[RMDB]
RNA sequence: GGGAACGACUCGAGUAGAGUCGAAAAGAUAUGGAAUGUGCCAGCUAGGUCGGAUUCGGAAACGAAUCGACGACCUUGGACCUGGCCACAUUCCUAAGUCAAACAGGGCACGUUCGCGUGCCCUGAACUUCUUUUGCAACUUCGGUUGCAAAAGAAGAAAAGAAACAACAACAACAAC
Reactivity to DMS in 0.01 (KOAc 150mM, MgCl2 10mM, bicine 150mM(pH8.5), 24C), signal-to-noise 1, nucleotides 027 to 126: g010a060u010a300u000g000g000a000a020u000g000u000g040c000c010a000g000c000u000a000g010g000u010c010g040g000a000u010u000c000g010g000a230a090a300c030g010a000a000u000c000g010a300c030g000a000c000c000u000u050g000g010a160c290c000u000g000g030c090c040a030c020a000u010u000c000c010u030a010a160g010u000c050a150a070a300c000a010g000g000g020c000a000c000g010u010u010c250g000c000g000u000g080c000c010c010u000g020a030a040

Structure probing data (DMS) for a 177-nucleotide construct. Values cover nucleotides 27 to 126. The DMS profile rests on 793 reads. The reactions ran in a buffer of 150 mM KOAc, 10 mM MgCl2 and 150 mM bicine (pH 8.5), at 24 C.